This 177-nucleotide RNA was probed chemically with 2A3 and DMS. The DMS profile rests on 916 reads.

[RMDB]
RNA sequence: GGGAACGACUCGAGUAGAGUCGAAAAAGCUCGACUACGGUCGAGCAAGUUUGUCAGCAAAAUCUGUGGGAUAUAUUGUCCCCAUAGGCUUUGUAAGCAACGAAACAAGCAGGACUACGGUCCUGCAGUUCGUAUGGGGCUUCGGCCCCAUACGAACAAAAGAAACAACAACAACAAC
Reactivity to 2A3 in 0.01 (KOAc 150mM, MgCl2 10mM, bicine 150mM(pH8.5), 24C), signal-to-noise 3, nucleotides 027 to 126: a000g000c000u000c000g020a010c010u010a050c250g190g000u000c020g010a000g000c000a000a000g010u000u050u050g080u020c060a010g000c000a000a010a000a000u040c020u000g010u020g010g000g020a000u010a030u040a140u260u300g150u170c060c020c000c000a000u000a000g010g000c030u000u020u020g040u090a110a000g000c000a010a010c000g080a060a030a080c070a060a010g000c000a000g000g000a020c030u030a030c230g070g000u010c000c010u000g010c000a000
Reactivity to DMS in 0.01 (KOAc 150mM, MgCl2 10mM, bicine 150mM(pH8.5), 24C), signal-to-noise 1, nucleotides 027 to 126: a070g010c000u000c000g000a000c000u000a190c240g000g000u000c000g000a000g020c000a000a000g050u000u000u000g000u120c000a300g000c000a000a000a000a050u000c000u000g000u000g000g110g000a080u000a090u110a270u000u070g040u000c150c000c000c000a000u000a000g050g000c200u000u000u000g000u000a120a300g050c010a000a000c050g000a120a000a000c300a210a110g000c010a000g000g050a010c000u000a100c290g010g000u000c000c000u070g000c000a130
2A3 adducts were read by reverse transcription with SuperScript II with manganese. The data come from the RNA Mapping Database (RMDB), library RFM100. For 2A3, 1,530 sequencing reads were counted.